[RMDB]
RNA sequence: GGGAACGACUCGAGUAGAGUCGAAAACGAAUUCUGCGGGGAUGGAGGCAAGCGUGGGCUCAAAAACAUUGGUGAGCCACUCGUGUGCCACCUGGUUGAGCGGAAUGUGCUCUUUGUGAUUAACCGAGUCCUACUAAAUAUUCGUAUUUAGUAGGACAAAAGAAACAACAACAACAAC
Reactivity to 2A3 in 0.01 (KOAc 150mM, MgCl2 10mM, bicine 150mM(pH8.5), 24C), signal-to-noise 9, nucleotides 027 to 126: c010g010a000a050u060u010c010u040g010c010g010g050g020g040a040u120g030g030a020g020g000c020a040a040g010c010g010u030g000g010g020c010u010c020a060a080a040a050a050c100a180u120u200g160g010u070g080a010g010c000c020a180c020u020c010g040u070g040u040g010c000c010a020c000c000u040g080g020u110u130g040a030g010c030g010g060a070a050u090g050u090g030c010u020c030u050u100u100g130u050g070a140u130u140a060a040c020c030g020a030
Reactivity to DMS in 0.01 (KOAc 150mM, MgCl2 10mM, bicine 150mM(pH8.5), 24C), signal-to-noise 9, nucleotides 027 to 126: c090g000a110a060u000u000c010u000g010c020g010g010g010g010a110u000g010g010a090g020g010c020a040a090g010c030g020u000g010g000g010c000u000c010a020a060a080a100a140c230a220u010u010g020g020u000g000a020g000c010c010a060c030u000c040g020u010g000u000g000c000c000a050c010c010u000g000g010u000u010g010a160g020c010g000g010a030a030u000g010u000g010c080u000c050u000u000u010g010u000g000a130u010u010a100a160c040c030g000a200